The record gives the reactivity of an RNA of 207 nucleotides to DMS and 2A3. 2A3 adducts were read by reverse transcription with SuperScript II with manganese.
[RMDB]
RNA sequence: GGGAACGACUCGAGUAGAGUCGAAAACGUGGCUACAUUUCAACUUGCUGGUUUGCCGUCAAUGCAGGUGGCAAACCAAAACGCGCCCGGGCAGCCAUCACUAUCAAACUACGACUUUAGCCAGCGCCCAAACGUUGGAGUUCAACUUGCUCAGGGAUGGUCCUUUUAUAUUCGUAUAAAAGGACCAAAAAGAAACAACAACAACAAC
Reactivity to DMS in 0.01 (KOAc 150mM, MgCl2 10mM, bicine 150mM(pH8.5), 24C), signal-to-noise 1, nucleotides 027 to 156: c120g010u010g000g050c000u000a070c070a140u000u000u010c040a060a090c070u010u010g020c050u000g020g060u020u010u030g020c000c000g090u010c000a090a140u010g000c110a090g020g030u000g000g000c010a010a010a050c000c000a000a000a020a110c050g010c050g020c070c000c020g020g010g030c060a060g000c020c020a040u000c060a110c100u000a110u000c070a050a090a070c050u000a090c000g000a070c040u000u010u000a060g010c060c000a060g030c000g040c030c010c240a050a080a120c100g030u020u000g050g020a200g000u000u000c050a040a020c080u000u000g010c070u010c020a110g030g000g010a130
Reactivity to 2A3 in 0.01 (KOAc 150mM, MgCl2 10mM, bicine 150mM(pH8.5), 24C), signal-to-noise 1, nucleotides 027 to 156: c090g020u010g000g010c020u050a020c050a160u120u100u300c070a080a090c090u070u160g040c080u040g020g000u010u010u010g000c040c010g000u020c020a080a190u290g100c040a080g000g010u050g010g000c010a010a000a000c000c010a000a010a000a000c010g000c000g010c000c000c000g000g010g040c040a020g010c010c010a050u070c010a010c070u160a240u130c020a000a090a140c040u090a150c130g010a000c010u090u090u000a060g000c040c010a040g000c000g090c010c060c030a030a210a040c040g020u000u030g020g000a020g010u060u060c070a030a050c060u070u050g010c000u000c070a100g000g020g020a060

Notes:
Source: RMDB library OK3TST, as collected in RNAgym. The RNA was probed in 150 mM KOAc, 10 mM MgCl2 and 150 mM bicine (pH 8.5) at 24 C. Values cover nucleotides 27 to 156.